This 177-nucleotide RNA was probed chemically with 2A3. 2A3 adducts were read by reverse transcription with SuperScript II with manganese. Values cover nucleotides 27 to 126.

RNA sequence: GGGAACGACUCGAGUAGAGUCGAAAAGUGUUCGAGCAUGUUCUGAAGUGCCUUGAAUUCGCCCCGGCCUGGAUCGCCAACGACGCCGGGUGUGCCGAGCUCAUGCAGUUUUGAACUCCUACACCACAGUGGACCUUACGUUCGCGUAAGGUCCACUAAAAGAAACAACAACAACAAC
Reactivity to 2A3 in 0.01 (KOAc 150mM, MgCl2 10mM, bicine 150mM(pH8.5), 24C), signal-to-noise 1, nucleotides 027 to 126: g080u020g000u030u040c070g010a070g080c120a050u190g000u080u000c040u110g050a100a040g110u000g030c000c140u010u070g070a010a000u090u140c080g000c000c050c000c010g030g000c010c030u030g000g030a030u040c070g040c090c010a000a110c000g050a000c040g000c000c010g010g100g060u130g050u100g000c040c030g010a030g000c000u000c010a040u060g000c010a040g060u010u090u140u090g000a000a000c000u030c020c020u000a020c040a060c010c000a050c000